[RMDB]
RNA sequence: GGGAACGACUCGAGUAGAGUCGAAAAGUAACAGUUUUAAAUAAGGCAACAAAAGAGAUGUGUGUUUGGGAUAUGAGUAAGGAAUACAUAACAUCAGGGGCAACAUGUUCUGACUUUGGAAUCCCAGUCAAGCUAGUUGAUUCGUCAACUAGCUUGAAAAAGAAACAACAACAACAAC
Reactivity to 2A3 in 0.01 (KOAc 150mM, MgCl2 10mM, bicine 150mM(pH8.5), 24C), signal-to-noise 3, nucleotides 027 to 126: g050u030a060a070c040a070g020u000u050u080u190a160a220a170u180a130a010g080g010c020a030a020c020a070a120a040a040g090a020g000a040u010g040u020g000u000g050u020u080u060g080g000g000a050u070a060u220g070a060g080u070a070a060g050g010a050a030u090a060c030a030u080a070a060c020a030u070c020a020g030g020g020g000c010a020a010c010a060u040g050u050u000c040u000g070a080c050u090u010u000g010g040a030a000u000c000c010c000a010g050
Reactivity to DMS in 0.01 (KOAc 150mM, MgCl2 10mM, bicine 150mM(pH8.5), 24C), signal-to-noise 5, nucleotides 027 to 126: g020u000a110a090c070a070g000u000u000u030u000a050a110a120u010a100a100g010g000c050a050a050c080a060a080a090a100g010a070g020a050u010g010u000g010u000g000u000u000u000g010g020g010a040u000a080u010g010a110g010u010a080a080g000g010a080a050u000a040c040a050u010a120a070c080a040u000c040a070g010g010g010g010c080a030a040c070a050u000g010u000u000c040u000g010a090c060u000u010u000g010g030a110a110u000c010c010c000a130g000